[RMDB]
RNA sequence: GGGAACGACUCGAGUAGAGUCGAAAAACACUCAACCCAGGACGAAAUCAGCCUUGGACACCCUGCACUCUGCGCACGCACGCAACAAACAGAGAAGAGUCCAGUCCGGAGGGCAGAAAGCGCAGGACCUUCUUUAUCUGUUCGCAGAUAAAGAAGGAAAAGAAACAACAACAACAAC
Reactivity to 2A3 in 0.01 (KOAc 150mM, MgCl2 10mM, bicine 150mM(pH8.5), 24C), signal-to-noise 9, nucleotides 027 to 126: a000c070a020c030u060c020a040a100c020c000c010a010g020g030a030c040g070a050a030a130u120c040a050g030c010c020u050u070g020g020a020c010a050c020c010c010u030g010c020a020c030u050c030u050g020c050g010c020a040c060g050c020a040c050g070c010a020a090c050a070a170a020c030a020g110a000g030a140a030g040a020g030u010c020c020a010g040u020c010c000g030g040a060g020g030g000c010a010g070a060a060a010g030c040g000c020a010g000g030a030
Reactivity to DMS in 0.01 (KOAc 150mM, MgCl2 10mM, bicine 150mM(pH8.5), 24C), signal-to-noise 7, nucleotides 027 to 126: a070c140a100c050u010c050a100a120c040c000c020a070g010g000a040c050g000a060a090a070u030c100a120g010c030c040u000u000g010g010a070c050a100c080c010c020u010g000c020a120c040u020c020u000g000c060g020c030a080c110g020c100a070c050g020c060a060a050c120a060a100a120c070a040g000a060g010a100a090g010a120g010u000c030c020a100g010u010c030c020g020g020a070g020g010g010c030a050g000a050a050a070g000c070g010c020a050g010g000a240